Chemical mapping of a 177-nucleotide RNA with 2A3 and DMS. Reactivities are given for positions 27 through 126. DMS adducts were read by reverse transcription with MarathonRT. The data come from the RNA Mapping Database (RMDB), library M2PK90. The reactions ran in a buffer of 150 mM KOAc, 10 mM MgCl2 and 150 mM bicine (pH 8.5), at 24 C.
RNA sequence: GGGAACGACUCGAGUAGAGUCGAAAAGUUAUGGAAAACGUCUUAGCUACCACUACAACAACAAUGCUGGACGGUGAUGGUUCGACUUACUCGAAACGAUCACGUAGUGGUAGUCGUUCCCAUUCAAUAGAGUAAUGUAAUUCGUUACAUUACUCUAAAAAGAAACAACAACAACAAC
Reactivity to 2A3 in 0.01 (KOAc 150mM, MgCl2 10mM, bicine 150mM(pH8.5), 24C), signal-to-noise 9, nucleotides 027 to 126: g040u070u070a090u260g140g040a060a060a020a050c010g010u020c040u180u290a050g000c010u040a040c010c040a040c060u130a030c040a190a010c010a050a000c010a080a140u160g010c020u020g010g010a010c040g010g060u050g040a060u120g040g120u020u010c000g010a010c000u010u030a010c000u010c000g010a110a070a030c060g020a040u070c030a010c070g070u080a020g000u000g010g000u000a010g000u000c000g000u000u000c000c000c000a000u020u050c000a000a030
Reactivity to DMS in 0.01 (KOAc 150mM, MgCl2 10mM, bicine 150mM(pH8.5), 24C), signal-to-noise 9, nucleotides 027 to 126: g020u010u010a090u010g010g000a100a070a110a120c020g010u000c010u010u010a030g030c010u000a120c070c050a030c070u010a030c060a080a100c170a070a080c150a070a090u010g000c020u000g000g000a030c020g000g010u000g010a060u000g020g010u000u000c000g010a020c030u000u000a020c030u000c000g010a050a070a040c150g000a110u000c120a060c060g010u000a020g010u000g000g020u000a020g010u000c010g010u000u000c000c000c000a070u000u000c090a060a170